This 307-nucleotide RNA was probed chemically with 2A3.
The reactions ran in a buffer of 150 mM KOAc, 10 mM MgCl2 and 150 mM bicine (pH 8.5), at 24 C.
It was measured as part of the RMDB library POS240.
[RMDB]
RNA sequence: GGGAACGACUCGAGUAGAGUCGAAAACAGUGCUACUACGGUAGCACUGAAGUGAUGAUCGUGAGAUCAUCACAGCCGAACACGUGAGUGUUCGGCAGUUACCACUUCGGUGGUAACAGGCGUGCUUCGGCACGCCACCGAACUCUUCGGAGUUCGGAGAUUCUCUACGGAGAAUCAGACCGCGUUCGCGCGGUCAAGCGCCUCUUCGGAGGCGCAAGGGCUGUUUUUCUCGCUGACUUUCAGCCCCAAACAAAAAAUGUCAGCAUAGAUAUCUCUUCGGAGAUAUCAAAAGAAACAACAACAACAAC
Reactivity to 2A3 in 0.01 (KOAc 150mM, MgCl2 10mM, bicine 150mM(pH8.5), 24C), signal-to-noise 1, nucleotides 027 to 266: c000a000g000u000g010c000u010a020c000u020a020c150g170g020u000a000g010c000a000c000u000g000a030a000g000u010g000a020u010g000a000u000c010g030u010g020a050g010a010u010c000a000u010c000a010c000a000g000c000c010g000a020a000c000a000c040g150u170g160a130g050u000g040u000u000c000g000g000c010a010g000u000u000a010c010c000a000c000u040u050c240g120g000u000g010g000u000a000a000c000a000g000g000c010g000u000g010c000u060u080c190g060g000c000a000c020g000c000c020a000c000c000g000a000a000c010u020c030u050u090c200g130g000a010g010u000u000c010g030g000a050g000a020u020u000c000u040c010u000a080c300g110g000a010g000a000a000u030c000a030g010a000c000c000g020c030g080u050u060c300g120c010g040c030g090g050u030c010a010a020g000c020g020c010c010u060c000u050u130c270g120g020a010g000g000c000g000c020a000a030g000g000g010c000u010g000u000u000u000u020u000c160u030c140g020c010u000g000a000c000u010u020u000c010a000g000c010c000c010c100a030a000a000c040a010a000a000a000a000a000u030g010u010c000a000g000c000a000u000a020
Reactivities are rounded to 0.1 and cut off at 0 and 3.